[RMDB]
RNA sequence: GGGAACGACUCGAGUAGAGUCGAAAAAGCAUCAUUCGCUGAUUGUUGACCGCCUCUAGCAGAUCGUCCAUCGAUUUGAAAUUGUCCCCAUUCGACGGUGUCGCCGUCCUUAUCCAGAUAGGACUUGCAUUAAUAGGUGCUUCGGCACCUAUUAAUGAAAAGAAACAACAACAACAAC
Reactivity to 2A3 in 0.01 (KOAc 150mM, MgCl2 10mM, bicine 150mM(pH8.5), 24C), signal-to-noise 9, nucleotides 027 to 126: a000g040c050a050u090c030a050u160u160c090g030c090u050g030a210u060u140g080u040u100g050a070c010c030g020c020c000u030c020u050a030g030c020a020g020a100u040c020g060u050c060c030a100u110c030g050a070u030u030u130g090a100a090a070u100u110g060u060c010c010c000c010a050u100u100c040g040a040c020g040g010u030g030u060c040g000c030c020g030u030c000c010u070u100a100u060c020c020a060g030a270u110a080g040g030a030c000u030u070g030
Reactivity to DMS in 0.01 (KOAc 150mM, MgCl2 10mM, bicine 150mM(pH8.5), 24C), signal-to-noise 9, nucleotides 027 to 126: a050g010c030a070u020c090a090u020u020c090g020c040u010g000a110u010u010g020u010u010g010a160c080c030g000c050c010u000c050u010a080g020c030a060g000a050u010c050g000u020c090c080a110u020c040g010a060u010u010u000g010a060a070a090u020u000g000u010c010c000c010c050a140u010u020c090g010a080c060g010g010u010g010u010c060g010c030c050g000u010c030c040u000u020a080u020c070c080a100g010a100u020a060g000g000a050c030u010u020g000

The record gives the reactivity of an RNA of 177 nucleotides to 2A3 and DMS. For 2A3, 13,562 sequencing reads were counted. As a SHAPE reagent, 2A3 marks flexible, mostly unpaired nucleotides at the ribose 2'-OH. The RNA was probed in 150 mM KOAc, 10 mM MgCl2 and 150 mM bicine (pH 8.5) at 24 C. For DMS, 31,379 sequencing reads were counted.